[RMDB]
RNA sequence: GGGAACGACUCGAGUAGAGUCGAAAAUUCGGACGGGGAUCCCCGGCAAAUAACGUAAGAGGAUUUUUAUUUGUGCAUGUGUUCCUGCAAUUGAUCUCUUUGAUGACAUUCUCAUUCAUAGAAAGCGCUAUGACAGUAUGUUCGCAUACUGUCAUAGAAAAGAAACAACAACAACAAC
Reactivity to 2A3 in 0.01 (KOAc 150mM, MgCl2 10mM, bicine 150mM(pH8.5), 24C), signal-to-noise 2, nucleotides 027 to 126: u030u000c030g070g050a010c030g010g020g000g060a080u100c010c000c000c000g020g010c010a030a100a010u060a040a070c050g050u040a100a020g030a060g080g120a040u110u040u010u000u020a070u040u060u060g050u040g060c050a060u080g020u020g020u100u000c020c000u040g000c050a060a070u080u110g060a060u020c030u020c000u080u020u070g070a040u030g000a010c010a060u130u010c010u000c010a130u300u030c020a000u030a060g120a050a080a030g120c080g000
Reactivity to DMS in 0.01 (KOAc 150mM, MgCl2 10mM, bicine 150mM(pH8.5), 24C), signal-to-noise 5, nucleotides 027 to 126: u000u010c070g010g000a130c140g020g010g010g000a120u000c060c030c020c060g000g000c050a030a050a050u000a040a080c200g010u000a080a090g020a130g000g010a050u000u000u000u000u010a070u010u010u000g020u000g000c060a050u010g010u010g000u000u000c010c010u000g010c100a070a070u010u000g010a060u000c040u010c030u000u000u000g010a140u000g000a040c180a120u000u000c040u000c020a090u010u000c070a060u000a080g000a030a080a110g010c190g010
Structure probing data (2A3 and DMS) for a 177-nucleotide construct.
The reactions ran in a buffer of 150 mM KOAc, 10 mM MgCl2 and 150 mM bicine (pH 8.5), at 24 C.
For 2A3, 1,921 sequencing reads were counted.